[RMDB]
RNA sequence: GGGAACGACUCGAGUAGAGUCGAAAACCCAGUUCCGGGGCCGUUCACUGGAUCCGAAGCCUCUAGAAGGAUAAUAUAGGCACUCCAUACCCUACUCCGAUUCAAUACGUCCCCGUCGUACAGAAUGCAAGGGCAUCCCUGUUCGCAGGGAUGCCAAGAUAACAACUAAGUUCGCUUAGUUGUUAUCAAAAGAAACAACAACAACAAC
Reactivity to DMS in 0.01 (KOAc 150mM, MgCl2 10mM, bicine 150mM(pH8.5), 24C), signal-to-noise 1, nucleotides 027 to 156: c010c010c000a090g030u000u010c010c020g050g010g010g030c000c000g000u000u010c100a090c050u000g030g000a010u010c020c020g010a010a170g010c010c060u000c040u010a110g000a220a040g010g010a170u000a050a140u020a150u000a120g000g000c060a080c080u030c050c040a300u000a050c060c030c040u000a130c000u000c030c030g000a060u000u000c000a030a050u000a050c020g010u000c040c000c000c010g020u000c030g000u010a130c060a190g000a000a200u000g020c040a140a050g020g000g030c010a010u000c000c000c020u000g010u000u000c240g000c030a000g040g030g020a000u000g020c000c000a000a040
Reactivity to 2A3 in 0.01 (KOAc 150mM, MgCl2 10mM, bicine 150mM(pH8.5), 24C), signal-to-noise 4, nucleotides 027 to 156: c000c000c000a020g070u110u050c030c000g010g010g000g000c030c000g030u050u050c050a030c090u000g000g000a020u000c010c040g020a050a020g020c010c020u040c070u070a200g050a260a060g180g020a060u100a220a110u170a090u040a080g000g020c050a020c070u170c030c020a090u130a240c000c000c000u020a030c000u000c010c020g010a000u000u030c020a040a030u010a030c000g010u020c020c000c030c000g010u020c020g020u060a070c030a060g130a160a070u150g090c050a060a070g070g000g000c000a000u010c010c000c000u020g020u040u090c240g010c070a000g000g000g010a000u000g010c000c000a000a000
This 207-nucleotide RNA was probed chemically with DMS and 2A3. The 2A3 profile rests on 2,225 reads. DMS adducts were read by reverse transcription with MarathonRT. The RNA was probed in 150 mM KOAc, 10 mM MgCl2 and 150 mM bicine (pH 8.5) at 24 C.